The record gives the reactivity of an RNA of 207 nucleotides to 2A3. The data come from the RNA Mapping Database (RMDB), library RNAMAK. The reactions ran in a buffer of 150 mM KOAc, 10 mM MgCl2 and 150 mM bicine (pH 8.5), at 24 C.
[RMDB]
RNA sequence: GGGAACGACUCGAGUAGAGUCGAAAAGGGGUCGUAUGGUGUCGAAGAACGUGUAGACAUGUUCUGAAGCCUCCACGGAACAACAGCUACACGGGAGACAUGGCCAUACGACGGAGGCACCCAAAUCAGUAUUGGCGGUUCGCCGCCAAUACUGAAAGGUGCUGUUAUUGUUCGCAAUAACAGCACCAAAAGAAACAACAACAACAAC
Reactivity to 2A3 in 0.01 (KOAc 150mM, MgCl2 10mM, bicine 150mM(pH8.5), 24C), signal-to-noise 2, nucleotides 027 to 156: g050g010g010g010u000c000g000u000a010u000g000g000u110g000u060c040g170a280a000g000a010a010c010g020u000g000u000a010g050a110c040a100u090g000u000u020c010u020g030a140a010g000c000c000u000c000c000a010c010g020g000a010a010c020a020a030c020a070g070c000u010a000c010a010c000g000g010g000a000g000a010c150a110u200g210g000c010c000a000u000a010c000g000a000c020g000g000a000g000g000c010a010c010c020c000a010a090a050u040c000a000g020u000a000u000u000g000g010c010g000g100u030u120c250g050c030c000g000c010c000a000a000u000a000c000u000g010a010a000a010